[RMDB]
RNA sequence: GGGAACGACUCGAGUAGAGUCGAAAAGGUGUUCCGUUUCGACGGAACACCAAAGCGUACUACUAGGAGGAAUGAACUACCUCGUAUCCCAAAUAGGAUACAGAGGCAUUCUACCCACCCUAGUAUCGCAAAAGACCCGUUAGUUCGCUAACGGGUCACCUAUUUUGGGCUUCGGCCCAAAAUAGGUAAAAGAAACAACAACAACAAC
Reactivity to 2A3 in 0.01 (KOAc 150mM, MgCl2 10mM, bicine 150mM(pH8.5), 24C), signal-to-noise 1, nucleotides 027 to 156: g000g000u030g000u000u000c000c000g000u020u000u140c170g010a040c000g000g000a000a000c000a000c000c000a000a000a000g030c040g040u120a160c030u000a000c000u020a000g010g010a030g000g010a070a100u070g000a080a000c100u050a080c080c000u030c010g000u180a000u100c000c000c040a200a300a200u300a050g010g010a000u030a010c080a110g000a000g000g000c050a000u000u000c000u050a060c020c020c030a120c040c000c000u000a010g030u010a030u150c010g000c000a000a000a060a100g000a000c000c000c000g000u000u000a000g030u050u090c270g010c300u030a000a000c000g000g020g020u000c000
The record gives the reactivity of an RNA of 207 nucleotides to 2A3. The reactions ran in a buffer of 150 mM KOAc, 10 mM MgCl2 and 150 mM bicine (pH 8.5), at 24 C. The 2A3 profile rests on 617 reads. It was measured as part of the RMDB library RNAMAK.